[RMDB]
RNA sequence: GGGAACGACUCGAGUAGAGUCGAAAAUCGAGUUCUUCACGACAGUGCUGACAGCGGGGACACAGACAACUACCGGCUCGGCCGGCGCGGAUGGGGUUACGCGGUAUCUAUGCUGCUCAAACGGCAGGAUAAUUUAGAAUUUCGAUUCUAAAUUAUCAAAAGAAACAACAACAACAAC
Reactivity to 2A3 in 0.01 (KOAc 150mM, MgCl2 10mM, bicine 150mM(pH8.5), 24C), signal-to-noise 4, nucleotides 027 to 126: u090c010g010a030g060u060u040c020u060u090c050a010c090g100a030c040a080g060u040g080c010u050g040a050c030a020g020c040g030g020g000g020a010c040a000c010a070g100a060c030a070a020c050u080a060c010c000g040g000c090u120c110g140g000c010c000g030g010c020g020c000g030g010a050u080g030g000g010g010u050u050a030c050g010c000g020g010u000a020u010c020u030a090u140g050c000u020g010c000u020c060a150a150a030c020g000g000c010a010g090
Reactivity to DMS in 0.01 (KOAc 150mM, MgCl2 10mM, bicine 150mM(pH8.5), 24C), signal-to-noise 9, nucleotides 027 to 126: u010c060g010a100g010u000u000c090u000u000c040a080c060g010a120c160a080g020u000g020c050u000g010a090c090a080g000c080g010g000g010g010a090c080a060c080a070g000a070c090a060a070c090u010a110c050c020g000g010c030u010c140g020g010c030c020g000g010c100g020c060g000g000a080u000g000g000g000g000u010u010a150c080g010c030g010g020u000a060u000c070u000a080u010g020c010u000g010c020u000c090a070a080a160c140g000g010c040a030g000
Background:
Chemical mapping of a 177-nucleotide RNA with 2A3 and DMS. The 2A3 profile rests on 10,703 reads. The RNA was probed in 150 mM KOAc, 10 mM MgCl2 and 150 mM bicine (pH 8.5) at 24 C.